[RMDB]
RNA sequence: GGGAACGACUCGAGUAGAGUCGAAAACUUCUUUCAAUCAAUGCGAAAGCACACCCCCUACCGAAAUGGAUGCCUGGAACCAACCCUCGGGGAUCAGCUCCCCUCCCUCGCCUUCCCCGAACCUGGCCCCAACGGAUGCAUUCGUGCAUCCGUUGGGAAAAGAAACAACAACAACAAC
Reactivity to 2A3 in 0.01 (KOAc 150mM, MgCl2 10mM, bicine 150mM(pH8.5), 24C), signal-to-noise 1, nucleotides 027 to 126: c020u080u020c000u100u090u140c110a100a040u040c030a080a090u070g030c000g140a050a030a010g070c060a040c130a000c140c010c020c000c020u100a060c000c010g080a050a120a260u170g010g030a080u040g030c000c000u000g050g000a090a060c060c000a000a120c000c000c000u010c030g000g000g000g000a030u100c070a040g000c040u030c000c000c000c000u030c020c020c000u020c010g030c000c000u040u090c000c000c000c020g010a010a010c000c000u060g000g030c020
Overview: This 177-nucleotide RNA was probed chemically with 2A3. 2A3 adducts were read by reverse transcription with SuperScript II with manganese. The RNA was probed in 150 mM KOAc, 10 mM MgCl2 and 150 mM bicine (pH 8.5) at 24 C. The data come from the RNA Mapping Database (RMDB), library OK1LIB.